[RMDB]
RNA sequence: GGGAACGACUCGAGUAGAGUCGAAAACUAGACAAGCCCCACCUACUGUUAGUGUCUUUAGACAACCUUCUCCUCCCUCCAGAGAAAGUGCCCAUUCUAGUGGGACAGUAAGUCCUCCUUCACUGUUGGGUAUUUUGGGGUGAGUCUGGAGAGUGUGCACAUAAGUACGAUUCGUCGUACUUAUGUGAAAAGAAACAACAACAACAAC
Reactivity to DMS in 0.01 (KOAc 150mM, MgCl2 10mM, bicine 150mM(pH8.5), 24C), signal-to-noise 3, nucleotides 027 to 156: c060u010a090g010a110c040a090a300g010c030c010c000c010a100c090c060u000a060c090u000g020u000u000a070g030u010g020u000c050u000u000u000a110g010a120c030a080a090c020c030u010u000c020u000c040c010u000c020c030c010u000c010c030a100g000a100g010a030a050a060g030u010g000c000c010c000a040u000u000c040u000a040g030u000g000g000g030a010c030a120g010u000a070a220g010u010c020c020u010c250c010u000u000c030a070c070u000g010u010u020g030g030g040u010a050u000u000u020u000g010g030g030g030u000g010a210g010u000c020u000g010g010a070g010a070g030u010g000u000g020
Reactivity to 2A3 in 0.01 (KOAc 150mM, MgCl2 10mM, bicine 150mM(pH8.5), 24C), signal-to-noise 6, nucleotides 027 to 156: c040u040a010g030a060c030a070a030g030c010c040c000c000a030c020c040u110a120c070u150g080u240u150a060g020u040g020u030c010u070u170u130a090g010a030c020a030a060c030c030u040u030c010u010c000c000u040c020c020c000u010c000c010a020g010a000g020a020a050a000g010u020g010c010c010c000a030u100u030c030u040a020g020u010g010g020g000a000c010a010g110u180a200a020g010u030c010c020u040c010c030u170u140c040a030c040u030g010u060u020g020g000g020u030a030u030u060u060u050g020g000g000g000u040g020a020g020u030c050u020g000g000a020g000a010g020u090g030u060g030